[RMDB]
RNA sequence: GGGAACGACUCGAGUAGAGUCGAAAAGCCUUUUGUUUAAUGAGUCUGCGAGUCAGUGUUUGUGGCAAGACUAAGGGCUUCCGGCCCGGAGUCGCAGCGAAAGCAAGUCCGAACAGGGCGCAAUAAGUAUCCUAGAAAAAUUCGUUUUUCUAGGAUAAAAAGAAACAACAACAACAAC
Reactivity to DMS in 0.01 (KOAc 150mM, MgCl2 10mM, bicine 150mM(pH8.5), 24C), signal-to-noise 9, nucleotides 027 to 126: g000c010c010u010u020u010u020g010u000u010u010a080a080u020g010a140g010u020c030u000g000c040g000a080g010u000c020a090g010u010g010u000u000u010g010u040g010g020c040a100a070g000a020c010u000a250a140g000g000g010c000u010u040c260c170g000g010c010c000c010g010g020a120g000u000c010g020c180a090g010c020g000a090a070a130g000c020a120a100g010u000c010c010g000a070a050c100a080g000g010g010c010g020c090a040a060u030a050a100g000
Source: RMDB libraries RFM100 and RFMREP, as collected in RNAgym. An RNA of 177 nucleotides, treated with DMS and read out base by base. DMS adducts were read by reverse transcription with MarathonRT. The reactions ran in a buffer of 150 mM KOAc, 10 mM MgCl2 and 150 mM bicine (pH 8.5), at 24 C.